The record gives the reactivity of an RNA of 177 nucleotides to DMS and 2A3. For 2A3 the reverse transcriptase was SuperScript II with manganese. Conditions: 150 mM KOAc, 10 mM MgCl2 and 150 mM bicine (pH 8.5), 24 C.
RNA sequence: GGGAACGACUCGAGUAGAGUCGAAAAUCUCAGCUUUGUCAUAUGCCGGCAAACGUCUGGUGAAGGAUUUUAGUGUCAAAGGACAGAUGGUUAGCUUACAGGAGGAAGGCGAGGAGUAUACGCCGCGGCUACUAUGGAGGUUCGCCUCCAUAGUAGCAAAAGAAACAACAACAACAAC
Reactivity to DMS in 0.01 (KOAc 150mM, MgCl2 10mM, bicine 150mM(pH8.5), 24C), signal-to-noise 1, nucleotides 027 to 126: u010c000u000c000a110g010c040u000u010u000g000u000c050a140u010a100u010g020c080c070g020g020c040a050a040a050c170g010u000c020u030g010g000u000g030a110a150g010g000a060u000u000u000u000a080g020u010g000u000c050a000a090a080g000g010a030c030a060g000a090u000g010g010u000u020a080g010c030u000u020a060c090a050g000g010a070g010g010a070a030g020g010c070g020a100g020g000a110g000u010a060u000a060c110g030c030c050g000c170g040
Reactivity to 2A3 in 0.01 (KOAc 150mM, MgCl2 10mM, bicine 150mM(pH8.5), 24C), signal-to-noise 1, nucleotides 027 to 126: u000c030u000c020a030g000c010u030u040u080g030u060c000a020u040a040u230g030c040c010g050g000c010a170a070a150c030g030u020c080u110g000g030u120g070a040a110g050g010a020u040u120u170u220a110g030u060g040u050c060a090a060a020g110g010a010c010a060g010a020u010g000g000u080u020a000g040c030u020u050a000c040a030g060g000a030g010g020a060a060g030g000c010g040a030g060g060a040g050u090a030u020a130c090g030c000c010g000c000g150